[RMDB]
RNA sequence: GGGAACGACUCGAGUAGAGUCGAAAAGGAGAUCGAAGAUGACCGACGUCAGCACGGUCCGGAUGUAGGUCCGCAUGCAUCCAAGUUGACGAAACUUUACGAUUUCCAAAGCGGACAAGAAGUCAAAAGCUAGCAGUAGGUUCGCCUACUGCUAGCUAAAAGAAACAACAACAACAAC
Reactivity to DMS in 0.01 (KOAc 150mM, MgCl2 10mM, bicine 150mM(pH8.5), 24C), signal-to-noise 1, nucleotides 027 to 126: g000g000a010g000a000u000c070g100a190a030g000a110u000g000a000c000c000g050a280c100g000u000c160a190g100c170a100c150g050g000u010c010c060g000g000a010u000g030u000a060g000g000u000c000c000g000c030a030u000g000c010a000u000c000c000a090a000g000u000u010g000a000c300g080a180a070a070c000u000u000u000a030c030g000a000u000u000u000c000c000a090a100a190g000c020g000g000a000c060a090a250g000a160a140g000u070c060a010a150a100
Reactivity to 2A3 in 0.01 (KOAc 150mM, MgCl2 10mM, bicine 150mM(pH8.5), 24C), signal-to-noise 2, nucleotides 027 to 126: g000g000a020g020a000u000c030g030a170a000g050a190u190g040a020c000c000g090a050c020g140u270c080a050g070c090a000c070g000g050u090c050c000g010g000a000u000g040u020a000g000g080u000c000c000g000c000a000u000g000c000a000u000c000c000a000a000g000u020u000g000a020c160g040a090a000a000c030u000u070u100a070c000g030a000u000u000u000c000c020a180a040a000g030c000g000g000a010c020a010a010g100a030a020g070u250c160a010a020a010

The data come from the RNA Mapping Database (RMDB), library OK1LIB. Structure probing data (DMS and 2A3) for a 177-nucleotide construct. The DMS profile rests on 891 reads. The RNA was probed in 150 mM KOAc, 10 mM MgCl2 and 150 mM bicine (pH 8.5) at 24 C. Values cover nucleotides 27 to 126. For 2A3, 881 sequencing reads were counted.